[RMDB]
Chemical mapping of a 177-nucleotide RNA with DMS and 2A3. The reactions ran in a buffer of 150 mM KOAc, 10 mM MgCl2 and 150 mM bicine (pH 8.5), at 24 C. Reactivities are given for positions 27 through 126. The data come from the RNA Mapping Database (RMDB), libraries RFM100 and RFMREP.
RNA sequence: GGGAACGACUCGAGUAGAGUCGAAAAGAAUGGUAAAAGGUCUGAGUCCUCAGAUCCCCUCCCGGCAUCCCAGUUAUCCCCAGCUGCCUCUCCUCCAUCGCACUUCAGAAGUGCUGCGAUGGGCAGAAUACGUCAACGAGUUCGCUCGUUGACGUAUAAAAGAAACAACAACAACAAC
Reactivity to DMS in 0.01 (KOAc 150mM, MgCl2 10mM, bicine 150mM(pH8.5), 24C), signal-to-noise 2, nucleotides 027 to 126: g010a090a050u040g000g050u000a050a040a090a120g000g000u000c040u010g010a150g000u030c100c070u000c010a040g000a050u000c060c070c010c030u000c020c000c030g000g020c050a070u010c010c030c010a090g010u010u030a100u010c050c010c000c070a060g040c020u000g000c010c010u010c020u000c000c060u030c010c000a000u000c060g000c010a010c030u020u010c150a160g000a140a050g000u000g010c180u000g020c040g010a010u000g030g000g060c140a070g000a120
Reactivity to 2A3 in 0.01 (KOAc 150mM, MgCl2 10mM, bicine 150mM(pH8.5), 24C), signal-to-noise 2, nucleotides 027 to 126: g020a040a080u230g040g060u210a010a100a080a020g020g020u000c050u050g020a020g190u110c040c010u020c010a020g000a040u040c020c010c000c000u030c010c020c000g010g010c000a020u050c000c000c000a040g030u140u070a130u150c000c000c000c000a000g020c000u000g030c000c000u000c050u010c030c000u000c000c000a010u000c000g000c000a030c020u080u100c050a150g110a290a040g160u050g070c060u020g000c020g010a000u020g000g040g000c030a000g060a030